[RMDB]
RNA sequence: GGGAACGACUCGAGUAGAGUCGAAAAGGCAACGGAAAAGUAUGGCCCAGCUGCUCUUUCGCGGUAUGAUCCGCGAUUAAAUGAGGGAGUCAACUUGGAUGAGGUGAUCUUCUCAAAACAUACUCAAGGCUAUGACGCAAUUCGUUGCGUCAUAGCCAAAAGAAACAACAACAACAAC
Reactivity to DMS in 0.01 (KOAc 150mM, MgCl2 10mM, bicine 150mM(pH8.5), 24C), signal-to-noise 1, nucleotides 027 to 126: g000g080c000a030a070c070g000g000a030a050a050a080g010u000a010u030g010g000c010c000c020a070g010c010u030g010c050u000c090u000u020u000c000g000c020g010g050u010a160u020g010a090u010c010c010g020c000g010a000u000u000a020a050a220u010g010a050g020g000g000a030g000u010c020a040a060c020u010u000g010g000a180u040g000a050g000g020u000g020a010u000c040u000u000c100u010c050a050a090a020a080c110a080u000a040c020u010c160a050a130
Reactivity to 2A3 in 0.01 (KOAc 150mM, MgCl2 10mM, bicine 150mM(pH8.5), 24C), signal-to-noise 2, nucleotides 027 to 126: g030g000c020a040a010c050g000g010a040a040a010a070g050u020a050u120g050g000c040c000c000a030g000c050u090g000c000u050c000u040u060u000c030g000c040g030g000u090a190u300g140a090u080c000c000g000c000g010a010u000u100a070a080a050u110g030a060g040g010g000a040g040u060c010a010a020c030u030u060g140g020a060u160g070a040g000g020u010g020a070u000c030u100u000c000u060c050a040a100a050a040c050a030u090a070c010u000c080a020a130